[RMDB]
RNA sequence: GGGAACGACUCGAGUAGAGUCGAAAACCUCCAAACUUCGGUUUGGAGGAAAAGGAGCCAAAAUAAGAACGGAAAGGGAAGACGCAACCCAAGUCUAUAAAAAAAGUACCAUGUUCGCAUGGUACAAGUAUGGACCUUAGUUCGCUAAGGUCCAUACAAAAGAAACAACAACAACAAC
Reactivity to DMS in 0.01 (KOAc 150mM, MgCl2 10mM, bicine 150mM(pH8.5), 24C), signal-to-noise 2, nucleotides 027 to 126: c000c000u020c000c000a000a030a000c010u000u010c250g070g030u000u000u000g010g010a010g010g000a000a000a040a160g070g010a060g000c020c010a040a060a050a080u000a110a080g020a070a070c060g030g010a040a080a120g030g000g000a130a030g010a040c010g000c070a120a090c050c030c020a070a100g000u000c050u000a120u080a010a000a100a020a050a070a070g000u000a000c010c000a000u020g000u000u000c210g040c000a010u000g010g010u000a010c010a010a030
Reactivity to 2A3 in 0.01 (KOAc 150mM, MgCl2 10mM, bicine 150mM(pH8.5), 24C), signal-to-noise 2, nucleotides 027 to 126: c000c000u000c000c000a010a000a020c020u050u100c190g070g000u010u000u000g010g020a030g000g000a020a010a030a010g090g020a030g030c000c010a050a040a010a050u230a060a080g070a060a020c040g000g060a100a050a040g090g020g010a010a060g040a000c040g000c050a050a050c020c000c020a030a010g030u000c070u080a130u260a080a090a010a020a000a020a040g010u000a010c000c000a010u000g020u050u050c260g000c130a000u000g000g000u010a000c000a020a000
The record gives the reactivity of an RNA of 177 nucleotides to DMS and 2A3. It was measured as part of the RMDB library M2PK50. High DMS reactivity at an A or C suggests that its Watson-Crick edge is free. For DMS, 1,024 sequencing reads were counted. For DMS the reverse transcriptase was MarathonRT. As a SHAPE reagent, 2A3 marks flexible, mostly unpaired nucleotides at the ribose 2'-OH. The RNA was probed in 150 mM KOAc, 10 mM MgCl2 and 150 mM bicine (pH 8.5) at 24 C.